[RMDB]
RNA sequence: GGGAACGACUCGAGUAGAGUCGAAAAUUCAGGCAGACUAGACCGAGACUGUGGGUUUUUAUCCUGUUAGCCACUUAGAGGCUGUUUGAUCUUGGGAAGAUUACUUGCUUUUCUGUACAAAGUAUCUUUAUUUCUGCAUCUGUAAAGUGAAGAUAAAUCCCUAUUACCGAUUCGUCGGUAAUAGGGAAAAAGAAACAACAACAACAAC
Reactivity to 2A3 in 0.01 (KOAc 150mM, MgCl2 10mM, bicine 150mM(pH8.5), 24C), signal-to-noise 1, nucleotides 027 to 156: u020u000c020a010g000g070c000a000g000a060c010u100a020g050a080c040c030g010a010g000a020c020u010g020u050g070g010g000u100u130u000u050u230a080u150c000c000u000g010u050u120a040g020c000c000a020c100u030u090a030g040a110g160g020c000u000g040u120u160u150g020a070u000c030u000u020g030g000g020a020a000g000a050u110u080a070c010u040u030g050c030u080u060u300u230c130u130g050u010a030c010a030a000a000g070u020a020u040c010u000u100u000a110u050u090u040c030u040g050c010a120u050c040u030g030u170a110a070a060g000u050g040a050a000g010a090u180a070a170a150
Reactivity to DMS in 0.01 (KOAc 150mM, MgCl2 10mM, bicine 150mM(pH8.5), 24C), signal-to-noise 1, nucleotides 027 to 156: u010u010c020a090g020g000c030a080g000a060c060u000a080g000a100c040c010g010a100g020a050c050u020g030u000g010g010g000u000u000u000u000u000a050u040c020c000u000g020u000u000a050g010c020c010a100c070u000u000a120g000a100g000g030c010u000g010u000u000u000g000a060u000c050u020u010g000g000g040a060a080g000a120u000u010a040c050u000u000g000c020u000u000u000u010c000u000g000u020a250c090a050a050a120g010u010a020u000c010u000u010u000a060u020u000u000c040u010g020c050a150u020c110u000g020u010a040a050a060g070u010g020a030a060g010a090u000a030a110a190
The record gives the reactivity of an RNA of 207 nucleotides to 2A3 and DMS. For DMS the reverse transcriptase was MarathonRT. Source: RMDB library OK3TST, as collected in RNAgym. 2A3 adducts were read by reverse transcription with SuperScript II with manganese.